[RMDB]
Chemical mapping of a 307-nucleotide RNA with 2A3 and DMS. The RNA was probed in 150 mM KOAc, 10 mM MgCl2 and 150 mM bicine (pH 8.5) at 24 C. As a SHAPE reagent, 2A3 marks flexible, mostly unpaired nucleotides at the ribose 2'-OH. For DMS, 23,603 sequencing reads were counted.

RNA sequence: GGGAACGACUCGAGUAGAGUCGAAAAGAGACGCUACCCUUCCUGAGCUAAGUCAUGGAAGGGCUUGAGUGUAGCAGCUAGCGCAAUUUAGUGCGAGACUCUGACUCAUGUUGGGUAGUGGAGUGGGUAAGGAUGAUGAGUGCUUCUAUCAAGCAUCUCUCAUUGGCCCAACCACGUAGGCCUAAGAUAAAGCCCAUGGACCAUGGCAUGGGGGCUUCACACCUUGGUGUAAGCCCUUGUAGUUUUGUCUAUCACUCCUGAGCUAAAGUAUCCAGUUCGCUGGAUACAAAAGAAACAACAACAACAAC
Reactivity to 2A3 in 0.01 (KOAc 150mM, MgCl2 10mM, bicine 150mM(pH8.5), 24C), signal-to-noise 6, nucleotides 027 to 266: g040a000g000a010c020g020c020u030a030c020c000c020u050u060c030c040u090g050a060g030c120u260a200a030g050u040c020a020u150g020g010a050a060g050g010g000c010u010u050g010a020g010u060g020u090a020g020c140a010g010c040u170a090g030c020g000c030a100a140u230u290u230a200g070u040g020c010g010a020g030a060c000u000c010u020g020a010c000u000c010a020u090g050u100u050g060g010g000u020a080g000u050g010g050a210g110u050g000g020g020u080a170a110g190g020a020u020g000a020u230g000a000g010u010g010c000u050u070c060u090a300u280c070a010a010g010c010a070u100c010u000c000u010c070a000u000u060g130g020c000c000c000a000a000c010c000a010c010g000u020a030g140g040c000c000u010a040a040g030a120u170a060a120a030g020c000c010c020a020u070g060g010a020c010c020a020u010g000g000c010a040u080g030g000g000g010g000c000u010u020c040a010c000a010c020c040u090u300g130g000u000g000u010a000a010g000c000c030c000u010u080g020u010a030g000u010u040u120u170g020u010c030u040a090u110c070a060c080u060c010c040u050g060a030g040c050u120a140a080a030
Reactivity to DMS in 0.01 (KOAc 150mM, MgCl2 10mM, bicine 150mM(pH8.5), 24C), signal-to-noise 7, nucleotides 027 to 266: g000a100g010a070c040g010c050u010a110c010c030c020u000u000c030c030u000g010a080g020c110u010a100a160g020u000c000a020u010g000g010a160a060g000g000g010c090u010u010g010a040g010u010g010u010a040g050c120a060g020c120u010a170g010c020g020c030a150a150u020u020u020a110g030u000g000c020g000a140g000a090c010u010c010u010g000a040c010u000c010a080u010g000u010u000g010g000g020u000a120g010u000g000g010a140g010u000g000g000g020u000a110a130g000g010a000u000g000a020u020g020a010g020u000g010c000u000u000c300u020a130u020c280a030a000g000c000a010u010c010u000c010u000c000a010u000u010g010g000c000c010c010a050a070c010c000a010c020g000u010a090g010g000c000c010u000a040a070g010a130u010a100a110a080g000c030c010c020a070u000g010g010a140c080c070a040u010g000g000c060a080u000g000g000g000g000g020c000u000u000c190a010c000a030c020c050u020u000g030g030u000g010u000a010a020g010c000c000c000u000u000g010u000a030g000u000u010u010u010g010u000c020u000a170u010c110a120c170u000c020c030u000g000a100g000c060u010a070a100a190